[RMDB]
RNA sequence: GGGAACGACUCGAGUAGAGUCGAAAAGAGCGAUUAGACAAAGGGGGAGAGCUACAUAUUAGAUAGCUGUAUAAUCGUUCAAGUUACAUCAAAACAUCUUCAAUAUUUAUUACUUACUUUCCUUUCUGCCAGAGUACGGUAUUCGUACCGUACUCAAGGUUACGUUUGGUUUCGACCAAACGUAACCAAAAGAAACAACAACAACAAC
Reactivity to 2A3 in 0.01 (KOAc 150mM, MgCl2 10mM, bicine 150mM(pH8.5), 24C), signal-to-noise 2, nucleotides 027 to 156: g010a000g000c000g010a010u000u060a050g020a070c130a050a200a160g000g020g000g000g000a090g010a000g000c020u030a020c040a090u300a140u220u060a020g100a180u000a030g000c000u000g000u010a020u000a030a010u000c010g030u030u000c030a060a040g020u120u080a060c040a110u170c070a000a140a050a100c020a040u030c100u170u070c070a050a160u140a070u100u180u140a160u100u130a130c050u040u020a030c010u070u090u090c010c000u060u080u050c080u090g070c100c070a010g000a010g000u000a000c010g000g000u000a000u000u090c040g100u000a030c000c000g010u000a000c000u010c000a020a020